The record gives the reactivity of an RNA of 177 nucleotides to DMS and 2A3.
RNA sequence: GGGAACGACUCGAGUAGAGUCGAAAACGUGGCAGCUCGCUUCAGGGAAGCUGUGAAAUGCAAUGCUUCUUUUGGAGACACACUGCUGCCAUCCUUCACAGAGGAACAGCUUGAUGAGGAGCGUGCAUCCGAACUGAAAUUUCGAUUUCAGUUCGGAAAAAGAAACAACAACAACAAC
Reactivity to DMS in 0.01 (KOAc 150mM, MgCl2 10mM, bicine 150mM(pH8.5), 24C), signal-to-noise 4, nucleotides 027 to 126: c210g030u000g000g000c010a030g010c010u010c120g010c010u000u000c000a030g000g000g010a010a000g010c000u010g020u000g000a090a130a130u020g030c070a090a110u000g010c000u000u000c000u000u000u010u010g010g000a020g000a240c120a110c210a070c150u010g000c010u000g010c020c050a010u000c030c020u000u000c180a130c180a120g000a060g010g000a040a080c120a060g010c040u010u000g010a160u010g010a070g020g000a070g000c060g000u000g010c170a140
Reactivity to 2A3 in 0.01 (KOAc 150mM, MgCl2 10mM, bicine 150mM(pH8.5), 24C), signal-to-noise 4, nucleotides 027 to 126: c060g010u050g020g000c000a000g000c010u060c080g030c000u010u010c000a000g000g010g020a010a000g000c010u030g040u030g080a210a120a040u270g010c030a050a150u130g000c000u010u000c000u020u100u140u040g030g000a030g080a020c020a010c010a020c140u090g000c000u000g000c000c000a010u010c010c000u100u130c100a070c030a050g120a040g060g040a100a070c010a030g060c030u070u060g040a080u100g050a140g060g010a000g020c060g040u070g040c010a040
The DMS profile rests on 3,633 reads. The RNA was probed in 150 mM KOAc, 10 mM MgCl2 and 150 mM bicine (pH 8.5) at 24 C.